[RMDB]
RNA sequence: GGGAACGACUCGAGUAGAGUCGAAAAGGGGUCGACGAUGAGAGCCAGAACAAUAGCUCAUCGAUCUAUACUGAAGCCUCCACGGUAUAGGGAGAGCCUGGCUCGAGUCGACGGAGGCACCCAAAGGGAUGCCCUAUGUUCGCAUAGGGCAUCCCAACUAUUAUUGUUAGUUCGCUAACAAUAAUAGAAAAGAAACAACAACAACAAC
Reactivity to 2A3 in 0.01 (KOAc 150mM, MgCl2 10mM, bicine 150mM(pH8.5), 24C), signal-to-noise 3, nucleotides 027 to 156: g070g010g010g040u030c000g000a000c000g090a180u140g010a010g000a000g030c010c000a010g050a130a110c170a210a240u180a100g000c010u020c020a120u300c060g000a000u010c000u000a000u000a000c000u010g040a100a020g020c060c010u000c000c010a010c000g000g000u000a000u000a000g000g000g000a020g000a000g000c000c000u000g000g000c000u000c000g000a000g000u000c000g000a000c000g000g000a000g000g010c010a020c010c000c000a060a050a030g000g000g010a010u000g000c000c000c000u020a010u010g050u040u080c300g000c110a000u010a000g000g000g010c000a000u000c000c000c000a000a000
Reactivity to DMS in 0.01 (KOAc 150mM, MgCl2 10mM, bicine 150mM(pH8.5), 24C), signal-to-noise 1, nucleotides 027 to 156: g030g050g040g020u000c030g030a050c040g010a130u020g020a230g000a040g040c020c000a100g010a050a200c000a160a060u000a300g010c000u000c000a060u000c160g000a090u000c000u000a020u010a010c020u000g000a020a140g000c000c010u000c010c010a300c030g070g000u000a000u000a010g020g010g000a040g000a050g000c010c010u000g010g000c020u010c020g000a120g000u000c010g000a040c050g000g020a010g040g040c030a050c010c000c010a070a090a120g000g050g030a040u000g000c000c000c010u000a000u000g000u010u010c300g080c030a030u000a020g000g010g020c000a000u000c000c000c010a010a020